[RMDB]
RNA sequence: GGGAACGACUCGAGUAGAGUCGAAAAUGCGGUUGUGGGCGUCGCUGUUGUUGUCGGGCGGGGCGGCGUCACAGGGCGGGUCACCGGUGGCGGAAGCAGACGUUUUUGCGUAUGGGCGAUAAUGGCAUCUGUCAAAAGGAUUCGUCCUUUUGACAGAAAAAGAAACAACAACAACAAC
Reactivity to DMS in 0.01 (KOAc 150mM, MgCl2 10mM, bicine 150mM(pH8.5), 24C), signal-to-noise 1, nucleotides 027 to 126: u000g030c080g010g000u020u010g050u010g000g000g030c050g000u000c040g020c050u000g020u010u000g000u000u000g000u000c070g000g020g030c100g020g020g000g020c030g010g000c030g000u000c040a070c080a090g050g000g050c090g000g000g020u000c050a090c070c050g000g010u000g020g000c000g010g000a070a110g040c030a070g030a060c110g000u000u010u020u000u020g020c050g010u000a060u000g000g010g000c040g000a040u020a030a090u000g010g040c120a180

Conditions: 150 mM KOAc, 10 mM MgCl2 and 150 mM bicine (pH 8.5), 24 C. This 177-nucleotide RNA was probed chemically with DMS. High DMS reactivity at an A or C suggests that its Watson-Crick edge is free.